An RNA of 207 nucleotides, treated with DMS and 2A3 and read out base by base. For DMS the reverse transcriptase was MarathonRT. For 2A3 the reverse transcriptase was SuperScript II with manganese. Source: RMDB library OK3TST, as collected in RNAgym. High 2A3 reactivity points to a flexible backbone, as in loops and unpaired stretches. The reactions ran in a buffer of 150 mM KOAc, 10 mM MgCl2 and 150 mM bicine (pH 8.5), at 24 C.
[RMDB]
RNA sequence: GGGAACGACUCGAGUAGAGUCGAAAAGAGUACACAGAAGAUUAUUGUGAGCAUUGUGAGAUGCCGUACAGAACAUGCUCCACAUGGUAGUUUCCUUUCCUUCUCUUAGACUGGAGCCCUGUUUAUGUCCAGGGUUAGAGAGGAGAAACAGGGCUGGCAACUCAAGAUGGUUCGCCAUCUUGAGUUGAAAAGAAACAACAACAACAAC
Reactivity to DMS in 0.01 (KOAc 150mM, MgCl2 10mM, bicine 150mM(pH8.5), 24C), signal-to-noise 2, nucleotides 027 to 156: g010a080g020u000a090c070a170c110a130g020a150a100g010a130u000u000a050u000u010g020u000g020a140g040c030a050u000u000g000u010g020a230g010a120u000g020c010c050g050u000a280c050a120g010a270a080c070a050u000g020c020u020c000c060a040c010a110u020g000g010u010a020g000u000u010u020c010c000u000u000u000c000c040u010u010c000u020c000u010u010a100g020a170c090u020g020g020a050g000c010c020c020u010g000u010u010u000a060u050g010u000c110c030a100g030g040g010u000u020a090g010a130g010a140g000g000a300g020a050a080a100c050a060g010g030g030c000u020g000g020
Reactivity to 2A3 in 0.01 (KOAc 150mM, MgCl2 10mM, bicine 150mM(pH8.5), 24C), signal-to-noise 3, nucleotides 027 to 156: g020a020g060u100a030c090a010c060a060g160a110a030g030a140u110u150a120u110u290g040u070g020a030g010c050a020u070u200g030u060g040a100g030a080u070g060c050c040g050u070a040c020a040g040a030a010c000a020u020g020c010u020c030c020a040c010a040u050g110g020u070a070g020u010u040u060c000c000u010u060u060c000c000u060u040c020u010c000u030u090a110g050a200c060u060g090g060a020g030c030c010c000u040g030u000u070u050a090u130g110u050c020c020a010g020g080g010u040u060a010g030a000g000a050g060g010a030g050a020a020a000c030a020g040g000g010c000u010g000g060